Chemical mapping of a 177-nucleotide RNA with 2A3. The reactions ran in a buffer of 150 mM KOAc, 10 mM MgCl2 and 150 mM bicine (pH 8.5), at 24 C. For 2A3 the reverse transcriptase was SuperScript II with manganese. For 2A3, 632 sequencing reads were counted.
RNA sequence: GGGAACGACUCGAGUAGAGUCGAAAAGCGAACCUGCUCAGAAGCGCCAGCUCAUGGUCGACCUGUACAAGCGGAUAAUGGACGGCGUCGUCGGUCUGGGCAUGCUGCGUGGUGCUUUACGCGCCAACGCGUGCCCUCCCUUCGGGGAGGGCACGCGAAAAGAAACAACAACAACAAC
Reactivity to 2A3 in 0.01 (KOAc 150mM, MgCl2 10mM, bicine 150mM(pH8.5), 24C), signal-to-noise 2, nucleotides 027 to 126: g050c020g010a020a120c000c010u020g000c020u060c090a040g030a090a000g030c000g030c000c090a080g010c000u000c040a120u110g210g280u030c010g060a030c000c000u050g030u140a090c050a130a000g030c050g050g000a080u010a300a080u140g120g040a030c020g000g030c020g070u090c050g050u060c050g030g000u030c000u120g000g000g000c000a030u070g000c020u000g030c010g180u070g000g000u080g050c000u020u040u130a030c000g000c000g060c050c000a030a010
Reactivities are given for positions 27 through 126.